[RMDB]
The record gives the reactivity of an RNA of 177 nucleotides to DMS and 2A3. The RNA was probed in 150 mM KOAc, 10 mM MgCl2 and 150 mM bicine (pH 8.5) at 24 C. It was measured as part of the RMDB library TTRDES.
RNA sequence: GGGAACGACUCGAGUAGAGUCGAAAAGAUAUGGAUGUGUACAGGCAACAGCCUACUGACCUCGGAAACGAGGUUUAGGACAUGCCUGAACACAUCCUAAGUCAAAAGGCCUGGUUCGCCAGGCCAACAUGCAACUACCGUUCGCGGUAGUUGCAUGAAAAGAAACAACAACAACAAC
Reactivity to DMS in 0.01 (KOAc 150mM, MgCl2 10mM, bicine 150mM(pH8.5), 24C), signal-to-noise 2, nucleotides 027 to 126: g000a000u010a040u000g000g000a000u000g020u000g020u000a060c000a020g000g040c000a070a060c290a090g000c000c000u000a010c300u010g010a010c000c000u000c000g010g000a030a020a040c000g030a000g000g000u000u000u000a020g030g010a050c040a300u010g020c010c010u010g010a070a000c030a020c000a000u000c000c000u010a000a030g010u000c010a100a070a130a160g010g030c000c000u000g000g000u000u010c230g030c000c000a010g000g000c000c000a000a020
Reactivity to 2A3 in 0.01 (KOAc 150mM, MgCl2 10mM, bicine 150mM(pH8.5), 24C), signal-to-noise 2, nucleotides 027 to 126: g000a000u020a000u020g010g020a010u000g000u000g010u010a030c000a000g010g000c230a300a040c080a270g030c010c010u020a020c060u030g050a020c000c000u000c000g010g000a010a000a000c000g030a010g000g000u010u010u020a000g000g010a000c130a230u300g020c020c000u010g000a000a000c000a010c000a000u010c000c000u000a000a000g000u000c010a000a050a180a180g010g030c000c010u000g030g040u050u140c300g030c120c000a000g010g000c000c000a010a010
For DMS the reverse transcriptase was MarathonRT.